[RMDB]
Structure probing data (2A3) for a 207-nucleotide construct. The 2A3 profile rests on 2,617 reads. Reactivities are given for positions 27 through 156. The reactions ran in a buffer of 150 mM KOAc, 10 mM MgCl2 and 150 mM bicine (pH 8.5), at 24 C. It was measured as part of the RMDB library RNAMAK.
RNA sequence: GGGAACGACUCGAGUAGAGUCGAAAACGCUGGGACGUGGCCAUAGUAGGCGAGGAUCAUUAUUGCGGUACUGAAGCGCGCACGGUACCGCAAUAAUGGGAGCCUAGUGGCGUAACAUCGUCCUGUGCUGAAGCGCGCACGGCAACCGAAAGGUGCGGGGCUUGUAUUACUUCGGUAAUACAAGCCCAAAAGAAACAACAACAACAAC
Reactivity to 2A3 in 0.01 (KOAc 150mM, MgCl2 10mM, bicine 150mM(pH8.5), 24C), signal-to-noise 3, nucleotides 027 to 156: c030g020c010u050g010g000g000a010c000g000u010g030g010c010c010a010u090a080g300u040a030g120g040c000g140a270g010g010a000u000c000a000u000u000a020u000u000g000c000g000g000u020a000c000u030g050a280a020g010c000g000c000g020c020a020c020g000g020u000a000c010c010g040c000a000a000u000a000a000u000g010g000g010a000g000c000c000u000a030g030u010g000g000c000g000u040a040a020c060a300u240c020g010u000c000c000u010g020u040g010c010u090g020a140a100g000c000g010c010g000c000a010c030g010g000c040a080a100c000c000g070a080a040a050g010g030u060g000c040g010